[RMDB]
RNA sequence: GGGAACGACUCGAGUAGAGUCGAAAAGAUAUGGAUUCGUCUACCCACCCAUUCUGCGCGAAGAACAGGAUAACCUCGGAAACGAGGUUAUCCUGGGAGCGUUGAAUGGAGGACGAAUCCUAAGUCACACGUACAAUUACUUCGGUAAUUGUACGUGAAAAGAAACAACAACAACAAC
Reactivity to 2A3 in 0.01 (KOAc 150mM, MgCl2 10mM, bicine 150mM(pH8.5), 24C), signal-to-noise 2, nucleotides 027 to 126: g130a090u190a140u300g000g000a010u000u000c000g040u010c030u230a300c080c040c000a010c000c020c000a010u000u000c000u030g000c010g030c050g230a300a150g020a270a070c000a000g000g020a010u000a020a000c010c000u030c020g020g050a030a070a060c030g010a000g000g030u000u000a010u000c010c000u010g000g010g000a010g000c000g010u000u000g000a000a000u010g000g010a000g030g000a000c000g000a000a020u000c000c000u010a080a020g190u080c060a000
Reactivity to DMS in 0.01 (KOAc 150mM, MgCl2 10mM, bicine 150mM(pH8.5), 24C), signal-to-noise 3, nucleotides 027 to 126: g000a130u000a140u000g020g000a010u000u010c000g030u000c010u010a180c040c030c080a300c080c000c010a010u000u010c000u000g010c010g040c000g020a100a180g040a200a140c010a040g000g000a000u010a000a030c010c020u000c000g010g000a120a060a220c010g020a030g000g020u010u000a000u000c000c000u000g010g000g010a180g000c000g020u000u000g000a040a030u000g020g020a030g010g000a000c000g000a040a020u000c000c000u000a010a050g000u010c080a280